[RMDB]
RNA sequence: GGGAACGACUCGAGUAGAGUCGAAAACAGCGCCCGGCUGCAGAUGCGCAUUUAUCAGGGCGCAUCACUGAGCUGGCACUGGAGCGCAGGCGUUUUGGCUACCGUCGCAUCUGGCAGUUGCUGCGCCUAGUCUCACCUACUUCGGUAGGUGAGACUAAAAAGAAACAACAACAACAAC
Reactivity to 2A3 in 0.01 (KOAc 150mM, MgCl2 10mM, bicine 150mM(pH8.5), 24C), signal-to-noise 1, nucleotides 027 to 126: c020a030g020c000g000c090c020c000g030g000c000u060g000c020a040g010a090u000g000c040g000c090a050u040u080u290a300u240c140a080g020g150g000c000g010c000a000u010c000a010c020u070g060a010g060c010u030g030g000c000a010c070u070g030g060a100g030c050g000c040a000g020g000c060g000u040u070u140u240g040g020c000u000a050c000c040g060u070c040g000c060a190u040c100u110g010g000c030a020g000u030u030g010c030u000g030c000g000c000c000
Reactivity to DMS in 0.01 (KOAc 150mM, MgCl2 10mM, bicine 150mM(pH8.5), 24C), signal-to-noise 2, nucleotides 027 to 126: c010a040g010c020g000c140c060c060g010g020c020u010g020c080a060g000a030u010g010c010g010c010a040u030u000u010a160u010c300a120g020g010g020c010g000c010a000u000c080a100c180u010g000a130g000c000u000g020g030c010a030c050u000g020g010a110g010c110g020c080a040g030g010c070g010u000u000u000u010g010g020c020u000a040c050c040g020u000c140g010c160a100u000c110u000g040g000c000a030g060u000u000g000c040u020g020c020g000c010c050